This 177-nucleotide RNA was probed chemically with DMS and 2A3. 2A3 adducts were read by reverse transcription with SuperScript II with manganese. The 2A3 profile rests on 1,712 reads. The reactions ran in a buffer of 150 mM KOAc, 10 mM MgCl2 and 150 mM bicine (pH 8.5), at 24 C. Reactivities are given for positions 27 through 126.
RNA sequence: GGGAACGACUCGAGUAGAGUCGAAAAGAAGAAAAAGAAACACGCGAACCUGGCAAAGGCCGCAGAGCCAGGAGCCUGAUAAACGCAGAAAGAUCUGCGGCCAAAAGCGAGAAGAACUCGCAAGAAAAUUACCAUGCCUAUUCGUAGGCAUGGUAAUAAAAGAAACAACAACAACAAC
Reactivity to DMS in 0.01 (KOAc 150mM, MgCl2 10mM, bicine 150mM(pH8.5), 24C), signal-to-noise 2, nucleotides 027 to 126: g000a170a060g010a040a030a090a070a070g000a030a050a030c020a120c170g000c010g000a120a120c010c000u020g020g000c010a080a020a150g000g000c000c000g020c010a000g000a070g010c020c010a000g010g000a080g000c140c080u030g020a100u030a030a070a110c170g000c030a030g010a110a140a050g010a040u000c000u000g000c010g000g020c000c000a060a020a080a110g000c000g000a000g020a120a170g030a110a110c010u000c000g000c000a060a100g000a100a080a040
Reactivity to 2A3 in 0.01 (KOAc 150mM, MgCl2 10mM, bicine 150mM(pH8.5), 24C), signal-to-noise 2, nucleotides 027 to 126: g070a020a020g050a000a070a020a010a030g160a070a100a010c040a030c080g040c020g030a080a050c000c000u000g000g000c020a040a110a170g000g000c000c000g000c000a000g000a000g000c000c010a000g000g000a000g020c010c010u060g000a080u230a170a140a000c080g010c030a010g120a060a080a000g050a030u000c010u000g000c000g010g000c000c000a010a000a030a000g010c010g040a050g010a180a080g050a070a150c000u000c000g010c020a000a000g020a000a070a000